[RMDB]
An RNA of 177 nucleotides, treated with 2A3 and DMS and read out base by base. The RNA was probed in 150 mM KOAc, 10 mM MgCl2 and 150 mM bicine (pH 8.5) at 24 C.
RNA sequence: GGGAACGACUCGAGUAGAGUCGAAAAGCUCAACGCUUCGGCGUUGAGCAAAGAAAAUCCGUGCGAAGGGCUGCGUAGGGACGCACGGAAACCCACCGCCCAAAACUGAGAGGUUCGCCUCUCAGAAGAUUCUUAAUAUGUUCGCAUAUUAAGAAUCAAAAGAAACAACAACAACAAC
Reactivity to 2A3 in 0.01 (KOAc 150mM, MgCl2 10mM, bicine 150mM(pH8.5), 24C), signal-to-noise 5, nucleotides 027 to 126: g000c000u000c000a000a010c010g020c020u080u110c290g150g000c000g000u000u000g010a000g010c000a000a000a010g020a000a080a000a030u000c010c000g000u010g000c010g090a180a060g080g090g000c040u090g010c110g140u170a140g040g050g010a010c010g010c000a000c000g000g000a010a020a010c020c000c000a020c020c050g030c020c000c000a040a090a020a050c010u000g000a000g000a000g010g040u060u090c180g060c050c000u000c010u000c000a000g000a000a010
Reactivity to DMS in 0.01 (KOAc 150mM, MgCl2 10mM, bicine 150mM(pH8.5), 24C), signal-to-noise 4, nucleotides 027 to 126: g010c010u000c000a000a020c000g030c000u000u000c180g020g020c010g030u010u000g010a010g020c010a000a020a060g000a110a100a080a080u000c000c000g040u000g020c000g020a160a130g000g000g010c010u000g020c100g010u010a130g000g000g000a170c010g000c010a010c000g000g010a010a030a070c010c010c010a120c140c090g000c010c000c010a100a070a100a220c010u000g000a010g000a020g010g010u000u020c240g000c010c000u000c010u000c000a010g000a100a090